[RMDB]
RNA sequence: GGGAACGACUCGAGUAGAGUCGAAAAAUCUAAAGCAUGUCUCCGCUGCACACGUACUUCGUAUAUCCAAGCCACAAUAAACAAACUUUCGAGAGUGACUGCCUCGCCUCUCAACGUCACCUUAGAAAGUGUGCCAACUUCCAGAUGCCGCGAGGAGUCGUCGGCUUAAUUUCGAUUAAGCCGACGAAAAAGAAACAACAACAACAAC
Reactivity to 2A3 in 0.01 (KOAc 150mM, MgCl2 10mM, bicine 150mM(pH8.5), 24C), signal-to-noise 2, nucleotides 027 to 156: a000u090c040u060a000a060a020g070c030a050u060g040u040c050u000c060c020g000c080u050g000c020a030c010a000c060g070u110a090c040u050u100c020g090u080a040u000a010u140c050c060a080a010g040c050c000a030c060a070a110u090a130a170a010c130a050a150a080c020u040u030u030c030g000a020g000a020g030u060g010a010c000u100g010c000c030u040c090g020c040c020u040c020u000c050a000a040c060g000u000c010a010c000c000u030u020a050g040a020a000a000g020u020g020u010g030c000c020a130a080c070u080u040c000c000a010g040a100u010g100c000c010g000c020g000a020g050g040a000g020